[RMDB]
RNA sequence: GGGAACGACUCGAGUAGAGUCGAAAAUCCGCAGCAUUCGUGCUGCGGAACUUACCCAGGUUGUUGCUCGGUAUAACAACAAAACCCUUGGAAACAAGGGAAACAAUGAGCUAUUCGUAGCUCAUAACCACAAAAAUCAAUUCGUUGAUUUUUGUGGAAAAGAAACAACAACAACAAC
Reactivity to DMS in 0.01 (KOAc 150mM, MgCl2 10mM, bicine 150mM(pH8.5), 24C), signal-to-noise 4, nucleotides 027 to 126: u000c000c010g010c000a010g010c000a040u000u020c180g030u000g010c000u000g010c000g000g000a000a010c050u000u000a090c000c000c010a200g020g010u000u000g000u000u000g000c030u000c110g020g010u010a130u000a030a020c050a030a010c190a070a060a090a110c010c000c000u000u000g010g000a190a100a230c000a010a000g000g000g010a020a030a080c140a090a020u000g000a000g000c010u000a030u000u010c210g030u000a000g010c000u010c000a010u000a040a120
Reactivity to 2A3 in 0.01 (KOAc 150mM, MgCl2 10mM, bicine 150mM(pH8.5), 24C), signal-to-noise 2, nucleotides 027 to 126: u010c000c000g030c000a010g040c000a010u050u050c190g100u080g010c010u030g010c000g000g000a000a000c000u040u040a070c030c000c000a030g120g000u030u000g030u000u010g050c100u050c110g020g020u150a150u120a290a100c050a010a000c010a030a070a060a070c010c010c000u000u000g000g000a010a030a100c000a010a000g020g000g000a020a000a000c010a010a040u000g010a010g020c010u010a020u050u110c230g100u020a000g040c000u000c000a000u010a010a040
Chemical mapping of a 177-nucleotide RNA with DMS and 2A3. The data come from the RNA Mapping Database (RMDB), library M2PK50. Conditions: 150 mM KOAc, 10 mM MgCl2 and 150 mM bicine (pH 8.5), 24 C.